Chemical mapping of a 207-nucleotide RNA with 2A3. The RNA was probed in 150 mM KOAc, 10 mM MgCl2 and 150 mM bicine (pH 8.5) at 24 C. The data come from the RNA Mapping Database (RMDB), library ARCHII. For 2A3 the reverse transcriptase was SuperScript II with manganese. Reactivities are given for positions 27 through 156. The 2A3 profile rests on 1,146 reads.
RNA sequence: GGGAACGACUCGAGUAGAGUCGAAAAAGAAGGCCACUACGUAAAAAACCAAAACAAAACAAUUCCCGAACGCGAAAUCGCUCUCGCUGCUUAAUUAACGCAGCGACGUCCUACCCGGUUUGCCUGUAGGCUGGGAUAGGGCGUAAGACAUACAGGAGACAGAGAAAAAGUUCGCUUUUUCUCUGUCAAAAGAAACAACAACAACAAC
Reactivity to 2A3 in 0.01 (KOAc 150mM, MgCl2 10mM, bicine 150mM(pH8.5), 24C), signal-to-noise 2, nucleotides 027 to 156: a000g070a040a050g040g040c060c040a040c070u150a050c080g060u130a120a070a110a160a090a090c120c050a190a120a020a040c110a060a140a020a030c050a080a050u030u020c000c000c030g040a110a040c060g000c000g080a030a150a100u240c070g000c070u060c000u020c040g010c010u000g000c000u120u180a170a110u240u090a290a020c050g000c000a000g000c000g000a000c000g000u010c010c000u000a010c010c000c000g020g000u000u000u030g000c000c000u000g000u000a000g000g000c010u000g010g010g020a060u000a010g000g010g000c000g000u000a010a000g010a000c020a010u000a000c000a000g000g000a000